[RMDB]
Background:
Structure probing data (DMS and 2A3) for a 177-nucleotide construct. For 2A3 the reverse transcriptase was SuperScript II with manganese.
RNA sequence: GGGAACGACUCGAGUAGAGUCGAAAAGGAGACGUGAUUACGCAGGUCGCAGGCGCUAAAGCAACCGGCCCAAGCCAAGUUCGUGAUUCGGUGCGCGCGAAGAAGCCAGGCGAGACGAUCUCGAUCGUCGAACAGGGAUAUUCGUAUCCCUGUUCGAAAAAGAAACAACAACAACAAC
Reactivity to DMS in 0.01 (KOAc 150mM, MgCl2 10mM, bicine 150mM(pH8.5), 24C), signal-to-noise 9, nucleotides 027 to 126: g010g010a050g010a050c040g010u010g000a130u010u010a100c050g020c030a130g010g020u000c040g020c080a150g010g020c030g020c050u000a060a110a180g010c050a060a060c060c040g010g000c030c060c090a080a130g010c050c070a060a100g010u000u000c100g020u000g000a110u010u000c110g010g010u000g000c040g010c060g000c020g000a080a060g010a120a150g000c020c020a080g000g010c020g000a140g010a040c020g000a100u000c020u000c060g000a070u010c110g000
Reactivity to 2A3 in 0.01 (KOAc 150mM, MgCl2 10mM, bicine 150mM(pH8.5), 24C), signal-to-noise 8, nucleotides 027 to 126: g150g000a030g010a010c020g020u040g020a130u030u170a040c020g000c030a020g020g030u040c020g000c080a030g130g000c010g010c060u130a120a060a030g000c020a050a040c010c010g040g010c000c050c030a060a020g000c020c020a110a040g050u070u100c070g030u090g050a100u090u080c040g030g010u030g020c150g000c010g000c010g050a110a050g060a060a010g050c000c020a020g050g000c010g010a020g000a010c020g060a210u000c010u000c030g060a150u090c040g050
Values cover nucleotides 27 to 126. It was measured as part of the RMDB library OK2TST. The reactions ran in a buffer of 150 mM KOAc, 10 mM MgCl2 and 150 mM bicine (pH 8.5), at 24 C.